Notes
An RNA of 207 nucleotides, treated with DMS and 2A3 and read out base by base. For DMS, 1,821 sequencing reads were counted. It was measured as part of the RMDB library M2RFPK. The RNA was probed in 150 mM KOAc, 10 mM MgCl2 and 150 mM bicine (pH 8.5) at 24 C.
RNA sequence: GGGAACGACUCGAGUAGAGUCGAAAAAGACGUGUACGCACGUCACACCGUGGCGGCGGUGUAAAACAAACAUUAUGCCGCCAGCGUCCCGGAACAAGGCAUUUUCCGAUUCUCCGGGGGUUGCAAAAAAACUGAACUUGGUUCGCCAAGUUCAGAACGACAAUAUAUCCUUCGGGAUAUAUUGUCGAAAAGAAACAACAACAACAAC
Reactivity to DMS in 0.01 (KOAc 150mM, MgCl2 10mM, bicine 150mM(pH8.5), 24C), signal-to-noise 1, nucleotides 027 to 156: a080g000a040c030g040u010g010u060a060c220g020c050a000c000g000u000c010a090c060a120c000c020g000u000g000g040c020g030g100c000g010g000u000g010u010a040a030a120a140c200a300a150a060c100a090u000u000a040u010g100c000c000g040c020c000a020g000c040g010u000c030c000c000g000g010a030a090c000a110a120g050g020c090a130u000u000u000u040c010c000g000a300u010u000c070u000c040c030g010g030g010g040g010u010u040g050c000a000a000a040a070a090a040a290c010u000g000a000a000c000u000u000g000g010u000u000c300g020c000c000a000a010g020u000u000c000a020g000a020a110
Reactivity to 2A3 in 0.01 (KOAc 150mM, MgCl2 10mM, bicine 150mM(pH8.5), 24C), signal-to-noise 3, nucleotides 027 to 156: a000g000a000c010g010u010g030u060a030c210g020c090a000c000g000u000c000a000c010a010c020c000g060u040g030g020c000g000g010c020g000g030u050g010u070a070a080a020a050c080a020a140a010c020a030u100u160a110u280g010c010c000g010c020c000a000g010c010g040u050c000c000c000g000g010a030a060c130a110a020g060g050c100a080u060u090u100u140c030c020g060a080u150u030c020u000c040c010g000g000g010g000g020u150u120g010c030a050a020a000a020a000a000a080c000u000g000a000a000c000u010u000g000g000u040u040c090g000c080c000a000a000g000u020u000c000a000g000a020a020